[RMDB]
RNA sequence: GGGAACGACUCGAGUAGAGUCGAAAAUUUGACCUUCUCCAAAAAGGAAUCGACCAUCUUUUGGACGGGCUCAGGCACCUUCUGUCCACUCUGCCUCAAAGCUUUGGCGAUGUCCACCGAAUACCGCUCCUGUUCUUCGGUCAGGAACGUGACUGCAAGUAACCCCAUAAUUCGUUAUGGGGUUACUAAAAGAAACAACAACAACAAC
Reactivity to 2A3 in 0.01 (KOAc 150mM, MgCl2 10mM, bicine 150mM(pH8.5), 24C), signal-to-noise 4, nucleotides 027 to 156: u080u030u120g060a030c010c000u060u060c040u100c040c020a040a060a010a040a020g030g030a020a030u070c060g100a150c030c010a030u050c060u000u080u080u060g030g000a020c040g010g020g000c030u030c080a060g010g000c040a100c070c000u120u120c060u050g050u020c010c000a030c030u070c040u070g040c010c010u090c080a100a070a060g010c040u050u080u050g020g000c010g060a060u060g100u100c030c020a030c000c060g030a040a020u110a130c030c030g050c020u020c000c010u040g030u090u080c030u050u070c060g060g030u040c020a010g000g030a010a020c020g010u020g160a040c050u080g170c270a020
Reactivity to DMS in 0.01 (KOAc 150mM, MgCl2 10mM, bicine 150mM(pH8.5), 24C), signal-to-noise 2, nucleotides 027 to 156: u000u000u000g020a160c030c020u000u000c050u000c040c090a010a050a130a090a110g000g000a280a040u000c060g010a090c020c010a080u000c030u000u000u010u000g050g020a040c100g000g000g040c070u000c060a080g050g030c050a080c050c100u000u000c010u020g030u010c010c040a140c070u000c020u000g010c010c000u010c050a050a080a080g020c080u000u010u020g050g020c080g030a090u010g030u000c010c010a100c060c010g010a070a130u000a120c070c020g020c020u000c010c000u020g000u000u000c050u000u000c090g040g020u010c000a100g000g000a040a020c010g020u010g010a140c070u000g000c050a100

Source: RMDB library OK3TST, as collected in RNAgym. Chemical mapping of a 207-nucleotide RNA with 2A3 and DMS. DMS adducts were read by reverse transcription with MarathonRT. The 2A3 profile rests on 2,329 reads. Values are in units of 0.01, from 0 to 300, in steps of 10. Reactivities are given for positions 27 through 156.